RNA sequence: GGGAACGACUCGAGUAGAGUCGAAAAGCAGCCUGAUAGAGCUACGGGACUCGGUACACAUGGUCCGUCAUGCCGGCGUAGCUAGAAUCCGCCUCUCAUGAGGUCUCGGACCAGAUUUGGAAUUUGAAUCCACCACCUAUUUCGAUAGGUGGUGGAUAAAAGAAACAACAACAACAAC
Reactivity to DMS in 0.01 (KOAc 150mM, MgCl2 10mM, bicine 150mM(pH8.5), 24C), signal-to-noise 2, nucleotides 027 to 126: g010c150a130g000c020c020u000g010a150u010a140g000a060g000c030u020a010c070g010g000g020a100c120u010c000g020g020u010a070c160a110c100a100u010g000g000u000c010c020g000u000c170a050u000g000c100c000g000g010c010g020u000a020g040c010u010a090g000a090a150u000c120c040g000c010c000u000c050u010c090a130u000g020a040g050g000u000c140u020c000g020g020a030c020c000a080g010a150u000u000u020g010g000a070a130u020u000u000g010a220
Reactivity to 2A3 in 0.01 (KOAc 150mM, MgCl2 10mM, bicine 150mM(pH8.5), 24C), signal-to-noise 1, nucleotides 027 to 126: g040c020a050g050c000c000u020g000a110u120a210g150a010g000c040u020a020c000g030g010g120a080c030u040c060g000g000u080a020c050a010c020a160u050g030g000u060c010c000g020u030c010a030u150g020c030c010g080g000c000g050u020a010g000c030u000a070g190a000a070u110c080c030g020c020c000u010c020u010c060a160u210g000a000g000g080u010c050u050c040g020g000a020c000c000a000g050a140u140u160u170g030g040a030a100u000u130u130g050a050
Description:
Structure probing data (DMS and 2A3) for a 177-nucleotide construct. For 2A3, 844 sequencing reads were counted. 2A3 adducts were read by reverse transcription with SuperScript II with manganese. 2A3 is a SHAPE reagent: it acylates the 2'-hydroxyl of flexible nucleotides of all four kinds. The data come from the RNA Mapping Database (RMDB), library OK2TST.